[RMDB]
RNA sequence: GGGAACGACUCGAGUAGAGUCGAAAAAGCUGGUAGUACUACGGUACUACCAGCAUAAUUCGUGGUUCGAAAACCUCCCACGCAAAAAAACUAAGGAAAAAGGCCGAGUAGUACGCUACUCGGCGAAGGUACCGGAAUCAGUUCGCUGAUUCCGGAAGGUAACAUUAUUCUUCGGAAUAAUGUUACCAAAAGAAACAACAACAACAAC
Reactivity to 2A3 in 0.01 (KOAc 150mM, MgCl2 10mM, bicine 150mM(pH8.5), 24C), signal-to-noise 3, nucleotides 027 to 156: a010g000c010u000g010g000u000a010g000u010a020c010u030a040c140g080g000u020a000c010u000a000c010c000a020g130c000a000u020a070a050u070u070c030g000u030g010g010u080u160c090g060a090a100a110a170c010c010u020c010c040c000a010c000g100c080a020a040a020a010a000a070a140c110u150a090a140g080g050a080a090a030a030a020g060g020c010c010g000a000g000u000a010g000u010a010c110g000c070u000a000c000u000c000g010g000c040g010a000a000g020g020u010a040c010c000g000g000a000a000u000c000a000g060u050u090c150g000c130u000g000a000u000u000c000c010g000g000a000a000
Reactivity to DMS in 0.01 (KOAc 150mM, MgCl2 10mM, bicine 150mM(pH8.5), 24C), signal-to-noise 1, nucleotides 027 to 156: a160g010c000u000g000g000u000a000g020u000a080c000u010a080c300g110g040u010a000c010u000a000c010c010a020g060c000a010u000a000a160u040u000c050g030u010g000g000u000u000c000g000a190a060a080a300c000c010u000c010c000c000a020c050g000c100a000a010a070a060a040a020a010c140u010a020a070g000g000a050a030a080a060a160g040g030c000c000g020a000g000u000a050g030u000a100c210g020c000u000a020c000u000c040g030g000c000g000a030a020g010g000u000a110c000c000g000g000a040a020u000c000a010g020u010u040c230g010c000u000g030a020u000u000c010c020g000g000a000a010
About this RNA:
Conditions: 150 mM KOAc, 10 mM MgCl2 and 150 mM bicine (pH 8.5), 24 C. Structure probing data (2A3 and DMS) for a 207-nucleotide construct. For 2A3, 2,361 sequencing reads were counted. For DMS, 2,377 sequencing reads were counted.